[RMDB]
RNA sequence: GGGAACGACUCGAGUAGAGUCGAAAAGAUAUGGACGGUUUCAAGGGAGCUCGCUAUCGGAAACGAUAGAUGAGCGAGGAUCUUGGCCGUCCUAAGUCAAACUACAACGCCUUCGGGCGUUGUAGAACCGUACCAUUCACUUCGGUGAAUGGUACGGAAAAGAAACAACAACAACAAC
Reactivity to 2A3 in 0.01 (KOAc 150mM, MgCl2 10mM, bicine 150mM(pH8.5), 24C), signal-to-noise 1, nucleotides 027 to 126: g010a000u060a020u110g000g000a000c020g020g080u100u300u300c080a010a020g050g050g080a110g010c010u000c000g000c040u020a010u010c010g020g050a070a030a020c040g010a000u020a020g300a300u130g000a020g000c000g010a020g040g040a060u010c000u000u000g010g000c000c000g040u000c000c000u010a000a000g000u000c010a040a130a000c000u020a000c000a000a030c020g030c020c000u070u100c300g110g030g000c000g000u000u000g000u000a000g000a000a000
Structure probing data (2A3) for a 177-nucleotide construct. For 2A3 the reverse transcriptase was SuperScript II with manganese. Values cover nucleotides 27 to 126. It was measured as part of the RMDB library TTRDES.